An RNA of 207 nucleotides, treated with 2A3 and read out base by base. Source: RMDB library OK3TST, as collected in RNAgym.
[RMDB]
RNA sequence: GGGAACGACUCGAGUAGAGUCGAAAAUCGGGUUUUAAGAUUAAUUGCUUUCAUUUGGAUGCUUGCUCUUGGCCUAGCCAUCUCCACUUUACUGGAACUCAGGGUCCGGGCUUUCUACAUGCUGCUGGGUCUGCCUGUCAGCGAAAUGGAACUGAGCCUAUGAUUUUCGUUUCGACGAAAAUCAUAGAAAAGAAACAACAACAACAAC
Reactivity to 2A3 in 0.01 (KOAc 150mM, MgCl2 10mM, bicine 150mM(pH8.5), 24C), signal-to-noise 1, nucleotides 027 to 156: u040c050g000g010g060u060u010u030u160a050a030g010a040u070u170a090a110u160u170g020c010u000u060u150c050a130u150u080u120g070g040a080u110g010c020u040u040g020c030u040c000u070u090g000g000c010c020u010a010g010c010c020a020u070c160u020c020c000a040c050u050u120u090a050c030u080g000g120a120a070c020u030c040a080g060g000g070u000c060c060g040g020g000c000u070u050u010c050u040a090c020a010u120g000c010u000g040c020u040g000g060g050u210c050u030g080c000c030u090g000u130c000a000g000c010g040a020a060a060u080g060g010a020a020c020u010g030a020g030c000